[RMDB]
RNA sequence: GGGAACGACUCGAGUAGAGUCGAAAAGACUGUAUUUGGAAACAGGGCCUUUGAAGAAGUAAUUAAGUUAAAAUGAGGUCAUUAGGGUGGGCAGUAAUACAGUAUAACUGGUGUCCUUAUAAGAAGAGAUUAGGACACAGAUGCACACAGAGGGAAAUACUCAUGAUUUAUUCGUAAAUCAUGAGUAAAAAGAAACAACAACAACAAC
Reactivity to 2A3 in 0.01 (KOAc 150mM, MgCl2 10mM, bicine 150mM(pH8.5), 24C), signal-to-noise 6, nucleotides 027 to 156: g060a000c010u010g010u050a030u030u120u120g060g040a080a170a040c050a070g010g010g020c020c020u090u100u130g080a100a080g020a050a010g050u110a080a080u220u060a120a050g090u050u180a070a050a040a100u100g020a030g000g030u040c050a080u060u140a050g050g020g020u130g030g010g000c010a000g030u040a010a010u030a030c010a000g040u070a020u080a240a060c040u100g060g000u020g040u010c000c000u050u070a080u030a130a100g100a050a010g020a020g010a030u020u090a030g000g000a000c000a000c000a000g030a020u090g010c020a010c010a000c020a070g050a030g030g030g000a000a020a120
Reactivity to DMS in 0.01 (KOAc 150mM, MgCl2 10mM, bicine 150mM(pH8.5), 24C), signal-to-noise 2, nucleotides 027 to 156: g010a090c030u010g000u000a040u010u010u000g050g000a180a120a110c040a120g020g000g010c010c020u000u000u000g030a110a100g030a140a120g000u000a070a110u000u000a050a110g010u000u010a050a040a060a150u000g000a060g030g020u000c050a080u010u000a210g000g000g000u000g030g020g050c040a100g030u000a030a060u000a040c020a070g020u000a070u000a100a080c020u000g000g000u000g010u000c010c000u000u000a030u000a100a190g030a110a160g000a190g000a140u000u000a050g010g030a040c010a030c020a010g010a100u000g000c030a070c050a070c040a080g000a040g000g020g000a070a050a160

Chemical mapping of a 207-nucleotide RNA with 2A3 and DMS. For DMS, 4,721 sequencing reads were counted. For 2A3 the reverse transcriptase was SuperScript II with manganese. The reactions ran in a buffer of 150 mM KOAc, 10 mM MgCl2 and 150 mM bicine (pH 8.5), at 24 C.